Structure probing data (2A3) for a 207-nucleotide construct.
For 2A3, 502 sequencing reads were counted.
[RMDB]
RNA sequence: GGGAACGACUCGAGUAGAGUCGAAAAUGCAGCUUAUUUCAGAACUCCUUUUGCUACUGGAACUGCUUCAGUAUAAAAUGGCUGGAACUUCAAGUUCAGAAUUGAUUACAUUAGUACGUUCUUUAGGUUUGGGUUCUUAUUUUUUAGGAGUUUAUGACCUUUACCCCAAGUUCGCUUGGGGUAAAGGAAAAGAAACAACAACAACAAC
Reactivity to 2A3 in 0.01 (KOAc 150mM, MgCl2 10mM, bicine 150mM(pH8.5), 24C), signal-to-noise 1, nucleotides 027 to 156: u080g000c000a010g010c080u180u140a060u080u150u140c010a030g030a060a020c020u100c040c000u010u150u130u170g020c010u020a040c060u040g040g030a090a080c020u040g000c040u060u000c020a030g010u000a020u070a090a000a040a070u110g030g010c040u020g050g040a010a010c000u110u080c110a100a010g000u000u040c010a050g010a060a020u050u040g030a030u200u240a050c020a020u060u040a030g000u020a010c020g000u020u020c010u050u040u040a030g080g000u040u020u010g060g020g020u120u030c010u070u090a080u020u050u010u000u010u040a080g000g010a000g000u050u160u030a070u060g040a040